[RMDB]
RNA sequence: GGGAACGACUCGAGUAGAGUCGAAAAUACCGGGAAGCCGCCGAACGUGCGGAUAUCGUGAUCGCCGAGGUGGGCGUGUGGAACAAUCCCCUCUCGCGACACCCCGGGGAGCGAAAGGCCGCCCUGGAACUACUAGCCAUUUCGAUGGCUAGUAGUUAAAAGAAACAACAACAACAAC
Reactivity to 2A3 in 0.01 (KOAc 150mM, MgCl2 10mM, bicine 150mM(pH8.5), 24C), signal-to-noise 1, nucleotides 027 to 126: u080a030c010c010g000g000g000a130a080g090c010c030g040c000c000g180a210a140c080g140u280g000c000g000g020a010u010a060u100c020g000u020g090a180u000c020g080c160c030g020a020g010g080u120g090g020g000c160g000u050g020u130g160g220a240a120c080a180a170u140c000c010c000c000u000c000u000c010g010c000g000a020c000a000c000c010c000c000g000g020g000g000a070g030c000g050a270a030a010g130g000c030c010g000c000c010c020u020g070g010
Reactivity to DMS in 0.01 (KOAc 150mM, MgCl2 10mM, bicine 150mM(pH8.5), 24C), signal-to-noise 4, nucleotides 027 to 126: u010a120c010c010g000g010g000a140a160g010c000c000g040c010c000g000a120a100c160g020u020g010c000g000g000a030u010a030u010c120g000u000g000a130u000c010g010c060c050g010a020g000g010u000g020g010g030c270g030u010g010u010g020g030a120a110c070a120a210u010c070c020c000c010u000c010u000c030g010c010g000a060c020a030c010c020c000c020g010g000g010g010a100g010c020g010a050a130a180g000g010c040c050g000c020c020c030u000g010g010
An RNA of 177 nucleotides, treated with 2A3 and DMS and read out base by base. For DMS the reverse transcriptase was MarathonRT. The reactions ran in a buffer of 150 mM KOAc, 10 mM MgCl2 and 150 mM bicine (pH 8.5), at 24 C. 2A3 adducts were read by reverse transcription with SuperScript II with manganese.